This 177-nucleotide RNA was probed chemically with DMS and 2A3. For 2A3, 3,566 sequencing reads were counted. The reactions ran in a buffer of 150 mM KOAc, 10 mM MgCl2 and 150 mM bicine (pH 8.5), at 24 C. For DMS, 3,120 sequencing reads were counted. It was measured as part of the RMDB library M2PK90. As a SHAPE reagent, 2A3 marks flexible, mostly unpaired nucleotides at the ribose 2'-OH.
RNA sequence: GGGAACGACUCGAGUAGAGUCGAAAAGAAGAGCCGGGCUAACAAAGGUGGGAGGCACCCAACCCUUCGCAAGAGCCGAGUGGGAAGCCUAAGCGAAACCAAGACAAAAUGGUUAUAAAUAAUGCAAACUAUACUCUUUGUUCGCAAAGAGUAUAGUAAAAGAAACAACAACAACAAC
Reactivity to DMS in 0.01 (KOAc 150mM, MgCl2 10mM, bicine 150mM(pH8.5), 24C), signal-to-noise 4, nucleotides 027 to 126: g000a120a090g000a140g020c060c060g000g000g010c040u000a070a120c090a070a080a130g010g010u010g010g020g010a070g020g020c050a090c030c000c030a060a120c070c010c030u000u000c030g010c060a100a110g000a100g020c040c010g000a060g020u020g000g000g010a100a080g010c050c030u010a080a120g020c040g020a030a040a040c020c020a020a080g010a110c140a040a060a080a070u000g000g010u000u010a100u000a040a060a060u010a070a040u000g000c080a110a100
Reactivity to 2A3 in 0.01 (KOAc 150mM, MgCl2 10mM, bicine 150mM(pH8.5), 24C), signal-to-noise 4, nucleotides 027 to 126: g040a030a020g030a000g050c030c020g020g020g030c030u060a080a050c040a140a120a010g020g000u040g020g030g020a060g070g020c030a070c030c000c010a020a130c020c020c000u030u030c040g010c090a140a040g030a030g160c060c030g020a030g040u100g000g040g000a040a000g000c000c020u040a060a000g000c010g020a080a000a000c010c000a060a010g160a140c080a040a110a020a100u090g000g040u060u080a070u050a110a130a040u220a060a040u100g030c030a140a060